[RMDB]
RNA sequence: GGGAACGACUCGAGUAGAGUCGAAAAAGUCCCGGACCUAUCUAAAUUGGAGUCAUCCGACCGUAUGGAGAAAAUUUCCGACAAGAGGUGAUCCACUGAGGGUUUGCGGAAAAAUCACCUCCAGAGGGAUAAGCCUUAAGUUCGCUUAAGGCUUAUCAAAAGAAACAACAACAACAAC
Reactivity to 2A3 in 0.01 (KOAc 150mM, MgCl2 10mM, bicine 150mM(pH8.5), 24C), signal-to-noise 2, nucleotides 027 to 126: a000g040u010c020c000c000g000g030a020c000c000u070a150u240c010u040a070a090a180u180u100g020g000a040g160u060c030a060u000c030c010g080a050c020c020g090u090a080u150g020g050a010g080a070a130a070a080u060u080u000c010c000g030a030c060a050a010g040a040g080g020u030g010a010u000c010c020a030c040u090g040a110g040g040g020u000u070u080g060c020g000g050a030a030a020a020a050u060c010a030c020c030u010c050c030a050g060a060g090g080
Reactivity to DMS in 0.01 (KOAc 150mM, MgCl2 10mM, bicine 150mM(pH8.5), 24C), signal-to-noise 2, nucleotides 027 to 126: a180g020u000c000c000c000g010g010a090c040c030u000a040u000c050u020a040a110a080u000u010g020g020a070g010u000c100a060u000c000c040g010a180c180c050g020u000a130u010g030g020a050g000a070a090a080a190u010u010u000c000c000g010a090c120a050a050g000a270g020g010u000g000a090u000c030c030a070c120u000g000a070g000g000g010u000u000u010g010c030g010g000a010a030a080a110a060u010c090a070c040c030u000c030c040a050g010a160g000g010